[RMDB]
RNA sequence: GGGAACGACUCGAGUAGAGUCGAAAAGCCUCGUUAAAAGCGGCACAAAUGUAAUUGCCAACAACGAUUACGAAUACGCAAUGGCAGCCUAAUUAGGCUUGCCGCACUGAUUGGCUGACGUCAGAUACGCCGACCAGUGACAAACUUAUCCGACUGGGGAACAAGUAUACUUCGGUAUACUUGUUCCAAAAGAAACAACAACAACAAC
Reactivity to 2A3 in 0.01 (KOAc 150mM, MgCl2 10mM, bicine 150mM(pH8.5), 24C), signal-to-noise 7, nucleotides 027 to 156: g040c000c000u040c050g030u040u090a050a090a060a060g030c030g020g010c060a030c050a110a130a020u200g000u030a020a050u030u030g040c060c050a080a030c060a040a020c110g020a020u050u050a020c020g040a080a080u170a110c070g000c080a040a120u100g020g000c000a000g000c010c000u160a280a300u210u250a040g000g000c000u030u170g000c000c000g000c000a000c000u000g000a050u000u020g010g000c000u000g010a000c030g030u020c000a000g000a010u010a010c020g000c000c000g010a020c000c000a000g000u010g040a020c070a030a120a010c040u180u130a040u040c000c010g020a020c050u060g150g000
Reactivity to DMS in 0.01 (KOAc 150mM, MgCl2 10mM, bicine 150mM(pH8.5), 24C), signal-to-noise 2, nucleotides 027 to 156: g010c020c000u010c050g050u000u000a040a080a110a230g050c050g020g000c040a100c070a070a120a100u000g000u000a000a020u000u000g010c010c000a170a170c070a040a040c000g000a010u000u000a020c050g020a140a140u000a080c040g000c020a160a060u040g030g000c000a020g040c010c010u000a140a180u010u000a110g020g020c000u010u000g000c000c010g030c040a040c050u000g000a020u000u000g010g050c020u020g000a070c040g000u020c020a110g000a120u010a210c300g040c020c020g020a000c010c010a040g030u010g000a040c070a040a030a100c080u000u010a070u000c030c010g020a080c050u000g000g010